[RMDB]
RNA sequence: GGGAACGACUCGAGUAGAGUCGAAAAGGGGCUGCUGUGCCUAAAGGUCUCAGUCCUGUUCGUUUGUUUAGUCAGCUGCCACAGCUCUUGCAUGAUCUGGGGGUGCAGAAAAGACUUGCAUUUGACCCAUCGCACAUCUUUUCGAAGAUGUGCGAUGAAAAGAAACAACAACAACAAC
Reactivity to 2A3 in 0.01 (KOAc 150mM, MgCl2 10mM, bicine 150mM(pH8.5), 24C), signal-to-noise 5, nucleotides 027 to 126: g020g000g010g000c010u000g040c060u040g090u210g050c010c010u150a120a080a070g000g010u000c000u000c000a000g000u000c000c000u020g040u040u080c030g010u010u030u090g050u020u280u030a030g000u010c020a030g020c030u030g030c020c010a040c020a030g010c010u010c010u040u220g100c150a150u260g020a070u040c000u010g040g030g000g000g030u120g000c000a000g050a020a210a020a000g000a010c000u010u040g000c000a030u050u010u130g040a060c020c010
Reactivity to DMS in 0.01 (KOAc 150mM, MgCl2 10mM, bicine 150mM(pH8.5), 24C), signal-to-noise 3, nucleotides 027 to 126: g000g000g020g000c020u000g010c240u010g010u070g010c000c010u010a070a070a170g000g010u020c030u000c020a010g010u000c000c050u010g000u010u020c080g010u000u010u010g010u000u000u000a010g000u000c000a090g020c020u010g020c010c060a070c030a050g000c080u010c020u000u030g020c240a100u020g000a020u010c020u010g020g010g000g000g030u020g020c040a020g000a050a060a070a130g010a020c040u000u010g000c030a040u000u000u030g000a070c100c090

Description: An RNA of 177 nucleotides, treated with 2A3 and DMS and read out base by base. The 2A3 profile rests on 3,759 reads. Source: RMDB library OK1LIB, as collected in RNAgym.